[RMDB]
RNA sequence: GGGAACGACUCGAGUAGAGUCGAAAAAAGGUGCCAUCAUAUCGCUUAAGAACUCUUAACUCUGAUGGCUUUCGAGUUAUGUGGUGCAUUGAAGCUCUCCCUUCAAAUGGUCGUACAGUUCCGUGAACAAUAACAUUAACUUCGGUUAAUGUUAUUGAAAAGAAACAACAACAACAAC
Reactivity to DMS in 0.01 (KOAc 150mM, MgCl2 10mM, bicine 150mM(pH8.5), 24C), signal-to-noise 9, nucleotides 027 to 126: a060a060g010g010u000g010c020c010a020u000c020a040u000a060u010c130g010c100u000u000a050a040g000a140a100c240u010c020u000u000a040a040c070u000c080u000g010a030u000g010g010c060u000u000u000c030g010a060g010u000u000a030u000g010u000g010g010u000g010c050a080u000u000g000a070a080g000c060u000c050u000c030c040c010u000u000c070a040a070a070u000g010g010u000c060g010u000a060c100a080g000u000u000c020c020g010u010g010a080a160
Reactivity to 2A3 in 0.01 (KOAc 150mM, MgCl2 10mM, bicine 150mM(pH8.5), 24C), signal-to-noise 9, nucleotides 027 to 126: a000a000g090g010u040g010c030c000a010u030c010a010u050a020u130c050g030c060u070u030a060a030g050a180a150c030u030c010u200u030a050a030c010u010c060u140g040a040u050g050g010c000u010u040u020c020g010a010g000u050u030a060u090g050u070g010g030u040g030c030a060u020u100g050a040a010g010c000u010c000u020c030c010c000u000u020c020a060a070a070u090g020g010u030c020g020u030a050c020a070g010u060u010c020c020g070u060g040a020a020

The record gives the reactivity of an RNA of 177 nucleotides to DMS and 2A3. It was measured as part of the RMDB library M2PK90. For DMS, 68,283 sequencing reads were counted. Values cover nucleotides 27 to 126. The 2A3 profile rests on 38,956 reads. Conditions: 150 mM KOAc, 10 mM MgCl2 and 150 mM bicine (pH 8.5), 24 C.